Structure probing data (DMS and 2A3) for a 177-nucleotide construct. 2A3 adducts were read by reverse transcription with SuperScript II with manganese. As a SHAPE reagent, 2A3 marks flexible, mostly unpaired nucleotides at the ribose 2'-OH.
RNA sequence: GGGAACGACUCGAGUAGAGUCGAAAAUCCAAAGGAAAUGUAAACGUGGCGGAUGGAUAAUAAACCACAGAGGGAUCUAUGUAGAAUACCUUAUCCUCGAAACGGCAGAAGAGGAGCUCAUGUUCAAAAGAUGAUCUGUCUUCGGACAGAUCAUCUUAAAAGAAACAACAACAACAAC
Reactivity to DMS in 0.01 (KOAc 150mM, MgCl2 10mM, bicine 150mM(pH8.5), 24C), signal-to-noise 1, nucleotides 027 to 126: u000c020c060a090a160a090g050g010a030a090a030u000g010u090a000a070a000c060g000u000g020g000c030g020g000a050u050g000g040a060u060a080a040u050a160a130a240c170c070a050c150a010g060a080g000g000g030a030u000c140u000a000u040g000u000a070g000a060a020u050a070c130c010u000u010a020u000c000c000u000c000g000a020a040a130c100g020g000c090a000g060a030a020g000a040g000g000a170g000c090u040c070a010u000g030u000u060c070a160a000
Reactivity to 2A3 in 0.01 (KOAc 150mM, MgCl2 10mM, bicine 150mM(pH8.5), 24C), signal-to-noise 1, nucleotides 027 to 126: u030c000c000a000a000a000g220g100a030a000a000u190g000u150a050a110a040c090g000u000g010g000c020g110g000a090u000g000g080a000u050a060a000u130a000a060a030c020c030a020c130a000g060a000g060g050g000a050u050c000u000a120u100g090u130a060g090a210a000u140a080c000c000u030u000a000u020c000c000u000c070g000a000a300a000c080g000g000c050a000g010a140a000g000a060g080g000a000g000c050u030c150a050u000g030u130u000c000a030a020